RNA sequence: GGGAACGACUCGAGUAGAGUCGAAAAAUACGGCGGCUGGGGCGAUCGGCAGAUUCUGAUCUGCGGUGGACCGGCCAUGGUCCGCGCCACCAAGGCCGCCCUGAUCGCCAAAGGCGCGCCACCGGAGAACAGGUACUACGUUCGCGUAGUACCUGUUAAAAGAAACAACAACAACAAC
Reactivity to 2A3 in 0.01 (KOAc 150mM, MgCl2 10mM, bicine 150mM(pH8.5), 24C), signal-to-noise 4, nucleotides 027 to 126: a000u170a020c060g000g000c000g010g000c000u090g080g030g100g000c000g000a020u020c010g100g010c000a010g010a010u260u080c070u300g170a060u010c010u030g020c030g060g020u190g030g010a080c100c030g020g000c000c010a020u040g010g000u030c040c050g030c030g000c020c010a030c010c010a060a090g030g010c000c000g010c000c010c000u030g000a000u000c010g000c010c000a060a050a010g110g010c160g000c020g000c230c010a060c000c020g030g030a220g030
Reactivity to DMS in 0.01 (KOAc 150mM, MgCl2 10mM, bicine 150mM(pH8.5), 24C), signal-to-noise 2, nucleotides 027 to 126: a120u020a080c180g020g020c000g000g060c020u020g000g020g000g020c010g020a040u020c010g000g050c000a000g010a000u000u040c160u050g000a080u000c000u000g030c000g020g000u040g000g010a060c240c000g000g010c060c070a040u000g000g010u010c110c020g020c060g000c020c000a160c010c000a090a050g000g000c000c000g000c060c010c010u030g010a000u000c030g000c000c020a010a110a090g000g000c020g020c000g000c000c000a140c030c000g000g000a160g040
Source: RMDB library OK1LIB, as collected in RNAgym. An RNA of 177 nucleotides, treated with 2A3 and DMS and read out base by base. The DMS profile rests on 4,648 reads. The RNA was probed in 150 mM KOAc, 10 mM MgCl2 and 150 mM bicine (pH 8.5) at 24 C.